[RMDB]
RNA sequence: GGGAACGACUCGAGUAGAGUCGAAAAGAUAUGGAGCUACGGGAGAUGUCCCAUACGAAUUUCUCCCUCUAUCGGAAACGAUAGAGGGAGAAACUAUAUGGGCAUCGAAGAACGUAGCUCCUAAGUCCAUGUUUCACUUCUUCGGAAGUGAAACAUGAAAAGAAACAACAACAACAAC
Reactivity to DMS in 0.01 (KOAc 150mM, MgCl2 10mM, bicine 150mM(pH8.5), 24C), signal-to-noise 2, nucleotides 027 to 126: g000a110u000a300u010g000g000a000g010c010u000a030c000g010g010g000a140g000a020u000g010u010c010c000c000a010u000a000c150g020a050a160u020u010u000c000u000c000c010c000u020c000u000a000u000c010g000g010a210a190a220c000g020a010u000a000g010a000g000g000g000a000g000a020a000a000c060u000a290u000a010u030g000g000g000c020a000u000c000g000a110a130g010a120a160c010g000u000a000g010c000u000c000c000u000a000a060g000u000c050